[RMDB]
RNA sequence: GGGAACGACUCGAGUAGAGUCGAAAAGCAAAAGAUUAUCCAGGUGUAGCGGUGAAAUUCGUAGAGAUCUGGUGGAAAAUGAACCGGUGGCGAAGGCGAAAGAUAACCGCUGAAAAGAAGAAUUGAAUAACAUGAAAGUAUUCGUACUUUCAUGUUAAAAAGAAACAACAACAACAAC
Reactivity to DMS in 0.01 (KOAc 150mM, MgCl2 10mM, bicine 150mM(pH8.5), 24C), signal-to-noise 7, nucleotides 027 to 126: g010c080a050a050a090a120g010a110u000u010a060u010c010c020a060g010g030u010g010u010a030g020c010g000g010u000g000a070a140a070u000u000c020g020u010a110g020a120g010a110u000c020u000g010g020u010g010g000a060a060a080a100u010g010a130a050c010c010g010g020u000g010g010c300g020a090a150g020g000c010g000a020a040a040g000a070u000a150a050c020c010g020c000u000g000a040a040a070a080g000a060a060g010a060a100u010u010g010a110a110
Reactivity to 2A3 in 0.01 (KOAc 150mM, MgCl2 10mM, bicine 150mM(pH8.5), 24C), signal-to-noise 2, nucleotides 027 to 126: g060c030a070a060a090a040g070a060u120u110a030u150c020c010a050g030g060u100g070u090a000g000c020g060g000u000g010a080a040a040u030u030c000g020u040a020g010a010g010a210u000c000u010g040g040u040g020g070a240a130a030a180u120g010a050a030c000c000g060g000u030g030g010c100g030a030a010g110g000c030g010a030a000a000g170a010u030a020a000c000c000g020c040u040g030a020a030a000a030g080a000a020g040a040a040u160u140g010a070a050

Background
The record gives the reactivity of an RNA of 177 nucleotides to DMS and 2A3. The RNA was probed in 150 mM KOAc, 10 mM MgCl2 and 150 mM bicine (pH 8.5) at 24 C. It was measured as part of the RMDB library M2PK90.